Source: RMDB library OK2TST, as collected in RNAgym. The record gives the reactivity of an RNA of 177 nucleotides to DMS. The RNA was probed in 150 mM KOAc, 10 mM MgCl2 and 150 mM bicine (pH 8.5) at 24 C. Values cover nucleotides 27 to 126.

RNA sequence: GGGAACGACUCGAGUAGAGUCGAAAAUCAAAAUAACUUGCUCAAUGGGAAAAGUGAACCAUUGAUGGUCAGUUAGUUAUAAGGGUAGGAACAACCUUGUUCACCAUUAUGACCACUAGGUAGGUGAUGCGUACGCACCAUUCGUGGUGCGUACGCAAAAAGAAACAACAACAACAAC
Reactivity to DMS in 0.01 (KOAc 150mM, MgCl2 10mM, bicine 150mM(pH8.5), 24C), signal-to-noise 1, nucleotides 027 to 126: u000c080a150a110a060a090u010a060a000c010u000u010g010c020u000c000a000a030u000g010g000g010a030a130a190a180g010u000g000a090a290c010c000a010u010u020g000a010u000g000g000u010c100a010g000u000u000a050g010u000u000a050u000a090a060g000g000g010u000a040g050g030a060a190c090a190a040c160c080u010u000g010u020u000c060a040c000c010a070u020u020a050u000g030a020c010c100a040c050u010a060g040g000u000a050g010g000u000g010a130